[RMDB]
RNA sequence: GGGAACGACUCGAGUAGAGUCGAAAACAGUACGUUAUCUUCUGUCAAACAGCAGAUACGGCACAUGCUAACAACAUUAACAGAUUUAAUGUUGCAAUCACUCGUGCCCAAAAAGGUAUUCUUUGUGCAUUCGGUGGUUGUUCGCAACCACCGAAUGAAAAGAAACAACAACAACAAC
Reactivity to 2A3 in 0.01 (KOAc 150mM, MgCl2 10mM, bicine 150mM(pH8.5), 24C), signal-to-noise 1, nucleotides 027 to 126: c000a000g100u150a000c050g030u140u230a030u000c000u090u000c000u010g080u100c140a220a210a120c000a000g020c020a000g020a000u020a010c020g000g000c010a000c000a090u100g010c000u090a070a110c040a010a000c000a040u040u000a000a000c000a250g160a300u040u030u000a010a000u010g000u000u000g000c080a030a150u010c010a030c030u010c010g010u030g020c020c020c060a000a220a000a000a000g250g000u160a200u030u060c040u050u050u040g120u160g030
Conditions: 150 mM KOAc, 10 mM MgCl2 and 150 mM bicine (pH 8.5), 24 C. The record gives the reactivity of an RNA of 177 nucleotides to 2A3. The data come from the RNA Mapping Database (RMDB), library 15KREP.